This 207-nucleotide RNA was probed chemically with 2A3 and DMS. 2A3 adducts were read by reverse transcription with SuperScript II with manganese. For DMS the reverse transcriptase was MarathonRT. The reactions ran in a buffer of 150 mM KOAc, 10 mM MgCl2 and 150 mM bicine (pH 8.5), at 24 C. It was measured as part of the RMDB library RSTRND. DMS (dimethyl sulfate) methylates the pairing face of unpaired adenines and cytosines. For 2A3, 1,901 sequencing reads were counted. Values cover nucleotides 27 to 156.

RNA sequence: GGGAACGACUCGAGUAGAGUCGAAAAAGACGAUUAUUCGUAUGCAAUGGCUGCCUGAUUAGCACAAGUUAAUUCAGAAGCCAUCGUCCUGCGGUGAAUGCGCUUACUCUGAAGCCGCCGGAUGGCAUAACCCGCGCUUGAGCCUACGGGUUCGCGCCUAAAUUCUAGGCUUCGGCCUAGAAUUUAGAAAAGAAACAACAACAACAAC
Reactivity to 2A3 in 0.01 (KOAc 150mM, MgCl2 10mM, bicine 150mM(pH8.5), 24C), signal-to-noise 3, nucleotides 027 to 156: a010g060a060c070g030a050u130u100a040u300u280c030g000u010a020u030g000c020a050a070u020g010g000c010u030g080c110c010u000g000a010u020u010a000g060c010a060c080a300a140g020u020u020a010a050u230u100c000a010g010a020a010g000c000c000a010u020c010g010u000c000c000u000g010c000g000g000u050g020a030a040u080g020c090g040c130u130u170a140c080u070c020u120g030a030a000g000c000c000g000c010c030g000g000a010u010g090g000c000a020u030a070a100c000c030c000g000c000g000c020u200u250g000a000g000c010c000u060a060c190g030g000g000u000u000c030g000c000g020c000
Reactivity to DMS in 0.01 (KOAc 150mM, MgCl2 10mM, bicine 150mM(pH8.5), 24C), signal-to-noise 1, nucleotides 027 to 156: a090g000a020c050g050a100u010u010a130u000u000c030g060u000a030u000g000c010a110a040u000g000g010c000u000g010c150c000u010g000a050u020u000a030g000c000a160c300a120a300g000u010u000a010a010u030u000c060a030g030a300a010g000c000c020a000u000c030g030u000c010c020u000g070c010g010g020u010g010a030a080u000g050c100g000c120u010u000a120c060u000c020u000g000a300a300g000c070c000g020c000c000g050g000a040u000g000g040c050a140u000a040a040c030c050c000g000c050g000c130u000u000g000a100g030c010c000u010a170c100g030g040g010u000u000c040g050c050g000c070